[RMDB]
RNA sequence: GGGAACGACUCGAGUAGAGUCGAAAACUUCCUUGAAGGGGAGUGCCAACACGGCAGCCCCUGUGGCUGUGCAUGGCAAGGCCGAUCCAGAGGGGGGCGAUGCAAAGGAGGAGCGUGUGAGUGUAGCAAACAUUGUCUAUUUCGAUAGACAAUGUUUAAAAGAAACAACAACAACAAC
Reactivity to 2A3 in 0.01 (KOAc 150mM, MgCl2 10mM, bicine 150mM(pH8.5), 24C), signal-to-noise 7, nucleotides 027 to 126: c000u030u010c010c000u030u130g150a100a060g020g010g010g000a050g080u040g010c010c010a090a060c140a040c120g040g000c010a020g030c010c000c010c040u040g020u040g020g000c010u020g010u080g070c060a090u100g050g000c040a040a050g050g000c010c020g020a050u030c040c030a020g030a090g050g020g000g010g010g000c020g040a030u090g030c070a090a040a050g030g010a020g020g000a010g010c050g010u060g020u040g050a080g030u080g030u050a020g040c060
Reactivity to DMS in 0.01 (KOAc 150mM, MgCl2 10mM, bicine 150mM(pH8.5), 24C), signal-to-noise 9, nucleotides 027 to 126: c210u000u000c010c000u000u010g020a150a090g010g000g000g010a100g020u000g010c010c010a100a140c170a090c150g010g010c010a050g010c010c010c010c080u010g010u010g010g010c030u000g010u000g010c060a090u000g000g010c050a090a120g010g010c020c030g000a110u010c050c040a090g000a130g000g000g000g000g000g010c060g010a070u000g010c080a040a080a100g000g010a060g000g000a060g010c040g010u000g010u000g010a070g020u000g010u000a080g010c150